[RMDB]
RNA sequence: GGGAACGACUCGAGUAGAGUCGAAAACAUCGAUGCCGUCACAGCACAAUUGAUGGACUCACCUAGUAAGUCCAGUGAUUCGCAUAACUUGGAGGAUGCACUAUCCACACAGCCAACACCCGUGCUGAAAAACGCGUUUAUUCGUAAACGCGUUUUUAAAAGAAACAACAACAACAAC
Reactivity to 2A3 in 0.01 (KOAc 150mM, MgCl2 10mM, bicine 150mM(pH8.5), 24C), signal-to-noise 8, nucleotides 027 to 126: c030a050u170c060g060a030u070g040c030c020g070u060c020a020c030a060g050c040a020c040a120a120u110u210g070a070u070g030g010a010c000u030c040a110c020c060u040a070g040u130a160a000g000u020c010c000a010g030u030g030a050u080u040c060g000c070a030u060a210a100c040u060u060g050g000a040g060g020a050u080g080c070a020c120u090a070u030c000c000a010c000a000c010a050g020c000c020a060a010c020a090c030c000c050g050u090g030c010u060g030
Reactivity to DMS in 0.01 (KOAc 150mM, MgCl2 10mM, bicine 150mM(pH8.5), 24C), signal-to-noise 5, nucleotides 027 to 126: c090a080u030c110g020a070u000g010c010c050g000u010c020a100c090a070g010c070a070c110a090a080u020u030g020a130u000g000g000a030c010u000c090a050c070c110u000a080g000u010a060a030g010u000c000c000a020g010u000g010a050u010u010c090g000c020a050u000a050a070c070u000u000g010g010a100g000g000a060u020g010c060a070c110u010a060u010c010c030a110c080a110c080a060g010c050c040a040a080c080a120c020c040c010g010u010g000c040u000g000